[RMDB]
RNA sequence: GGGAACGACUCGAGUAGAGUCGAAAAGAUAUGGAUCGGAGUUCUUUUGACGUUCGCGGUUCGGAAACGAACCGGCGAACGAUAAGAAUGACGAUCCUAAGUCAAAACUGGUGGUUCGCCACCAGAACUGUACAUAAUACUUCGGUAUUAUGUACAGAAAAGAAACAACAACAACAAC
Reactivity to 2A3 in 0.01 (KOAc 150mM, MgCl2 10mM, bicine 150mM(pH8.5), 24C), signal-to-noise 8, nucleotides 027 to 126: g020a020u080a030u200g010g000a010u010c020g010g010a040g030u010u020c020u090u200u150u210g300a160c060g010u000u000c000g010c010g030g020u000u010c010g020g010a070a080a040c010g000a010a010c030c010g040g050c000g000a000a000c000g000a000u010a010a010g000a000a010u030g010a010c000g010a000u000c000c000u000a030a010g020u010c030a000a020a190a250c000u010g000g010u010g010g070u080u090c300g080c070c000a000c010c000a000g000a010a010
Reactivity to DMS in 0.01 (KOAc 150mM, MgCl2 10mM, bicine 150mM(pH8.5), 24C), signal-to-noise 9, nucleotides 027 to 126: g000a050u000a300u010g000g000a010u000c000g010g000a300g010u000u000c000u010u000u000u000g020a270c090g010u000u000c000g050c000g000g000u000u000c000g010g000a090a080a240c010g010a000a010c010c000g040g070c000g000a010a000c010g020a040u000a020a010g000a020a010u010g000a300c000g000a010u000c000c000u000a010a080g020u000c030a080a080a140a180c000u010g000g010u000g000g010u000u010c290g010c010c000a000c000c000a000g000a050a130